The data come from the RNA Mapping Database (RMDB), library OK3TST. Chemical mapping of a 207-nucleotide RNA with DMS and 2A3. In probing experiments dimethyl sulfate is read out at A N1 and C N3, which are open when not base-paired. DMS adducts were read by reverse transcription with MarathonRT. The reactions ran in a buffer of 150 mM KOAc, 10 mM MgCl2 and 150 mM bicine (pH 8.5), at 24 C.

[RMDB]
RNA sequence: GGGAACGACUCGAGUAGAGUCGAAAAGGACGACGAAGAAGCCCAUCAUGCCCAUCGCCAUCUGCACCAUCUCGUCGGAAUGCGGGUGGUACAUGAAGGUGCCUGAUUUCACGAGGUCGAACUCGUAGACGUAGGUCUUGCCGACCGGGAUGUGCGGGAAACAAAAGUCAUUCGUGACUUUUGUUUCAAAAGAAACAACAACAACAAC
Reactivity to DMS in 0.01 (KOAc 150mM, MgCl2 10mM, bicine 150mM(pH8.5), 24C), signal-to-noise 2, nucleotides 027 to 156: g000g000a060c010g010a120c040g000a110a150g030a110a150g030c050c010c050a120u000c060a050u010g050c050c020c040a160u000c090g020c020c020a020u000c010u000g000c010a030c040c000a060u000c070u000c030g010u000c060g030g020a130a090u000g020c010g020g010g050u000g000g040u000a030c060a070u000g010a090a130g020g000u010g020c010c020u010g000a120u020u000u000c010a060c010g010a050g040g040u000c180g020a100a140c020u000c030g010u000a100g020a010c050g010u010a090g040g020u000c050u000u000g020c000c040g010a070c030c010g020g000g000a040u000g000u020g030c050g010g010
Reactivity to 2A3 in 0.01 (KOAc 150mM, MgCl2 10mM, bicine 150mM(pH8.5), 24C), signal-to-noise 5, nucleotides 027 to 156: g060g020a010c050g000a010c080g020a090a070g030a040a030g080c020c040c010a060u070c030a010u070g030c020c010c010a050u060c050g010c030c040a050u030c020u040g000c000a020c030c020a060u050c050u030c080g160u030c050g040g060a130a070u130g040c010g020g010g020u010g000g020u050a020c020a070u230g050a070a020g080g000u050g000c010c010u120g030a120u050u100u080c040a030c020g010a020g040g060u110c060g030a110a060c030u010c020g010u040a070g010a060c030g040u060a050g080g020u020c020u030u120g080c020c000g020a040c040c060g020g010g020a050u030g010u020g010c030g040g070